Chemical mapping of a 177-nucleotide RNA with 2A3 and DMS. The DMS profile rests on 4,992 reads. For DMS the reverse transcriptase was MarathonRT. Reactivities are given for positions 27 through 126.
RNA sequence: GGGAACGACUCGAGUAGAGUCGAAAAAUAUUUAUAGCAACUCUCUCAGGUGUAAUGUCAAAUCUACCUCCAGCUUGUCCAACUGAUAUUACUAUAUCUGGAUUGUGCUCUUGAAUAGCUUUAUCUACCUGAUAAUCGUAUUCGUACGAUUAUCAGGAAAAGAAACAACAACAACAAC
Reactivity to 2A3 in 0.01 (KOAc 150mM, MgCl2 10mM, bicine 150mM(pH8.5), 24C), signal-to-noise 9, nucleotides 027 to 126: a000u110a050u060u110u070a140u080a030g000c020a040a300c000u000c000u000c010u020c060a020g000g040u020g010u070a050a070u080g020u030c030a060a040a110u040c030u100a090c010c020u030c010c010a030g030c050u120u110g050u080c030c030a080a060c090u040g010a010u010a020u070u040a040c100u070a020u040a060u230c000u010g020g010a030u020u020g030u020g010c000u010c030u070u060g040a070a040u040a040g020c010u070u090u030a130u050c030u050a100
Reactivity to DMS in 0.01 (KOAc 150mM, MgCl2 10mM, bicine 150mM(pH8.5), 24C), signal-to-noise 3, nucleotides 027 to 126: a080u070a030u010u000u020a070u010a100g010c030a060a070c040u000c030u010c040u050c010a040g000g000u010g000u010a030a020u010g000u010c030a040a070a130u030c060u010a100c050c030u000c020c020a050g020c050u020u010g000u010c030c040a090a110c160u020g000a020u000a010u000u000a070c060u010a050u050a020u010c010u010g000g000a070u000u010g000u010g000c010u000c050u010u010g010a030a030u020a020g000c110u000u000u000a090u020c010u030a140